[RMDB]
RNA sequence: GGGAACGACUCGAGUAGAGUCGAAAAAAACAGGAACAGCCCUUAAUAUGCUCGAGAAUCCUGUCCUUCUAACAUGUGAUGCGAAUAGGGAUAUGUUUUUGGGAAAUUUUAUGAAUGAAUUUGGGUGCACUCGAAUAGAAUUCGUUCUAUUCGAGUGAAAAGAAACAACAACAACAAC
Reactivity to DMS in 0.01 (KOAc 150mM, MgCl2 10mM, bicine 150mM(pH8.5), 24C), signal-to-noise 6, nucleotides 027 to 126: a060a040a070c060a040g000g000a020a050c060a150g010c010c000c000u010u010a080a090u010a100u000g000c030u000c040g020a100g010a090a060u020c030c020u010g000u010c020c020u000u020c050u000a080a080c120a030u010g020u010g010a060u030g000c070g020a100a100u040a030g000g000g000a070u010a030u010g000u000u000u000u010u000g000g000g010a050a070a060u020u010u040u020a270u020g010a070a060u020g000a060a080u010u000u010g000g010g000u020g000
Reactivity to 2A3 in 0.01 (KOAc 150mM, MgCl2 10mM, bicine 150mM(pH8.5), 24C), signal-to-noise 8, nucleotides 027 to 126: a000a000a000c040a030g030g010a040a010c030a040g170c000c010c020u020u030a140a060u110a080u210g030c020u010c060g070a050g040a070a070u060c000c010u020g040u030c010c010u060u070c030u040a080a030c010a040u070g070u080g080a070u150g070c050g080a090a090u150a170g040g000g030a010u040a070u090g040u000u020u020u050u020g070g020g060a030a080a060u170u210u130u100a150u120g110a100a030u090g030a050a100u040u060u090g050g000g020u050g040
An RNA of 177 nucleotides, treated with DMS and 2A3 and read out base by base.
Conditions: 150 mM KOAc, 10 mM MgCl2 and 150 mM bicine (pH 8.5), 24 C.
The data come from the RNA Mapping Database (RMDB), library OK1LIB.
Reactivities are given for positions 27 through 126.